[RMDB]
RNA sequence: GGGAACGACUCGAGUAGAGUCGAAAAGCUGAGUUUAUCGGCCAAAAUUCGGUCAUCAGCAGCGGUUAACGCCGUCAAUACAGCCUGAUUGGCGGCAAAACCGGAGAUAAACAACAAGGCACGCGGAGACAAGCACUAUUUUCGAAUAGUGCUUGUCAAAAGAAACAACAACAACAAC
Reactivity to 2A3 in 0.01 (KOAc 150mM, MgCl2 10mM, bicine 150mM(pH8.5), 24C), signal-to-noise 4, nucleotides 027 to 126: g000c010u000g020a010g060u080u080u040a070u050c020g020g000c010c010a020a110a080a260u300u220c140g020g000u020c010a070u010c000a050g060c010a010g060c030g030g020u040u040a090a020c150g010c000c000g000u000c000a000a010u080a160c050a050g110c020c020u080g020a000u000u000g020g000c020g000g000c020a080a100a010a020c010c000g000g010a060g010a010u080a020a050a000c030a040a030c040a070a050g070g000c030a010c040g090c070g110g070a080
Reactivity to DMS in 0.01 (KOAc 150mM, MgCl2 10mM, bicine 150mM(pH8.5), 24C), signal-to-noise 4, nucleotides 027 to 126: g020c020u000g010a050g020u010u000u000a060u000c050g010g000c010c030a110a110a140a160u010u010c190g000g020u000c010a120u000c020a020g000c040a290g020c000g000g010u000u000a070a160c290g020c010c000g030u000c000a010a020u000a120c080a140g000c170c140u020g000a050u000u000g010g010c000g000g020c000a010a030a050a010c000c000g020g000a090g030a010u000a030a030a050c080a080a100c140a050a130g010g010c040a060c130g010c090g000g010a270
Source: RMDB library OK2TRN, as collected in RNAgym. Structure probing data (2A3 and DMS) for a 177-nucleotide construct. The reactions ran in a buffer of 150 mM KOAc, 10 mM MgCl2 and 150 mM bicine (pH 8.5), at 24 C. For DMS, 3,860 sequencing reads were counted. For DMS the reverse transcriptase was MarathonRT. Values cover nucleotides 27 to 126.